[RMDB]
RNA sequence: GGGAACGACUCGAGUAGAGUCGAAAAGACGGAAAAGAUCGAACCUAAGAAGAUCAGGAAGUGCGAGCCGAAUCCUAGGGCGCCUAGGGACGCAUCGUCCGAUGCGAAAUAAACACUAACGUCGAAACCUCGGGAUAGGUUUCGACCUAUCCCGAGGAAAAGAAACAACAACAACAAC
Reactivity to 2A3 in 0.01 (KOAc 150mM, MgCl2 10mM, bicine 150mM(pH8.5), 24C), signal-to-noise 3, nucleotides 027 to 126: g050a000c000g030g020a060a060a020a090g010a030u090c070g020a020a070c000c000u030a050a060g070a030a000g000a070u020c010a000g080g060a100a030g030u050g050c020g000a010g060c020c060g040a010a040u030c000c010u020a020g010g030g160c100g050c000c000u050a030g010g000g060a000c020g020c000a010u000c040g170u030c090c190g000a000u060g010c030g060a080a110a000u170a010a090a000c020a000c070u060a090a020c020g020u020c010g040a010a060a070
Reactivity to DMS in 0.01 (KOAc 150mM, MgCl2 10mM, bicine 150mM(pH8.5), 24C), signal-to-noise 3, nucleotides 027 to 126: g000a010c020g000g010a100a050a040a110g020a050u000c000g030a080a170c070c120u000a140a070g010a080a110g010a060u030c010a090g020g010a070a000g030u000g050c030g000a100g010c040c100g000a100a090u040c030c000u000a060g010g030g000c130g000c060c000u000a020g000g000g010a180c040g010c020a000u020c000g020u020c220c140g000a020u000g000c000g020a030a100a030u060a070a070a040c060a010c070u000a090a180c040g000u030c010g020a080a110a170
Source: RMDB library OK1LIB, as collected in RNAgym. This 177-nucleotide RNA was probed chemically with 2A3 and DMS. The 2A3 profile rests on 3,288 reads. Reactivities are given for positions 27 through 126. Reactivities are rounded to 0.1 and cut off at 0 and 3. The RNA was probed in 150 mM KOAc, 10 mM MgCl2 and 150 mM bicine (pH 8.5) at 24 C.